Structure probing data (2A3 and DMS) for a 177-nucleotide construct.
RNA sequence: GGGAACGACUCGAGUAGAGUCGAAAAGGUAGCAGAGAAGAGACUAGUCUUCAGACUAGAUAGUAUCACACUACCGGUACAUAGUAGAGACAUACAUAGAUGUGUAUGACACAUCAGAGCUGCCAUGCACUACGGAGCGUUUCGACGCUCCGUAGUGAAAAGAAACAACAACAACAAC
Reactivity to 2A3 in 0.01 (KOAc 150mM, MgCl2 10mM, bicine 150mM(pH8.5), 24C), signal-to-noise 2, nucleotides 027 to 126: g000g020u000a020g010c070a030g050a000g000a170a000g130a010g010a080c000u010a020g020u010c000u240u290c170a040g010a000c010u000a000g010a020u030a040g010u010a020u080c010a040c020a020c100u040a010c010c000g000g010u040a040c030a000u100a000g070u030a010g050a000g030a070c010a050u150a020c000a020u090a070g090a040u040g040u020g020u040a160u290g080a000c020a000c000a020u010c010a000g040a000g030c010u030g010c010c040a060u080g000
Reactivity to DMS in 0.01 (KOAc 150mM, MgCl2 10mM, bicine 150mM(pH8.5), 24C), signal-to-noise 3, nucleotides 027 to 126: g020g000u000a020g040c090a160g020a120g030a180a130g010a160g030a140c010u000a000g020u000c000u020u010c290a170g000a050c010u000a010g000a100u000a070g000u000a020u010c040a160c200a270c030u000a020c050c020g010g020u010a080c180a120u020a050g000u000a030g010a080g010a120c190a040u010a030c110a040u000a090g000a020u000g010u000g010u000a160u030g000a000c000a010c020a050u000c040a090g010a140g000c020u000g040c030c020a100u000g020

For DMS the reverse transcriptase was MarathonRT. Conditions: 150 mM KOAc, 10 mM MgCl2 and 150 mM bicine (pH 8.5), 24 C.